[RMDB]
RNA sequence: GGGAACGACUCGAGUAGAGUCGAAAAUAAACCAUUGUAGUUCUUCACUUUUGUAUUAAACGUAGGAUUGAGGCGGUGGCUGCUUUUGGUUUACUAUGCGUUGUAAGGGGAUGGGGAAAUGGAACGAGCCCGGAGUAAUAUUCGUAUUACUCCGGGCAAAAGAAACAACAACAACAAC
Reactivity to 2A3 in 0.01 (KOAc 150mM, MgCl2 10mM, bicine 150mM(pH8.5), 24C), signal-to-noise 2, nucleotides 027 to 126: u170a010a000a000c000c000a070u040u070g020u030a010g060u000u060c040u090u050c050a020c130u000u060u130u040g090u100a140u040u290a100a130a070c070g000u010a060g000g150a030u130u180g050a060g040g000c030g030g000u000g070g030c010u000g060c020u060u080u050u040g040g000u020u030u000a090c050u040a060u150g060c060g000u010u020g160u080a070a070g090g000g020g040a130u200g000g000g000g060a010a110a020u130g000g000a060a090c050g040a060
Reactivity to DMS in 0.01 (KOAc 150mM, MgCl2 10mM, bicine 150mM(pH8.5), 24C), signal-to-noise 2, nucleotides 027 to 126: u000a080a060a080c040c030a090u010u000g020u010a070g000u010u010c020u000u000c100a100c030u010u010u000u020g000u000a070u020u020a020a080a080c130g000u000a080g010g000a100u100u030g010a110g040g000c200g000g020u010g000g080c120u000g000c100u020u000u060u010g010g000u020u000u010a030c170u000a040u050g010c110g000u000u010g020u000a080a070g020g000g010g000a110u020g000g000g000g000a040a000a180u000g000g000a070a030c120g000a180
An RNA of 177 nucleotides, treated with 2A3 and DMS and read out base by base. Conditions: 150 mM KOAc, 10 mM MgCl2 and 150 mM bicine (pH 8.5), 24 C. The 2A3 profile rests on 1,028 reads. Source: RMDB library OK1LIB, as collected in RNAgym. DMS adducts were read by reverse transcription with MarathonRT.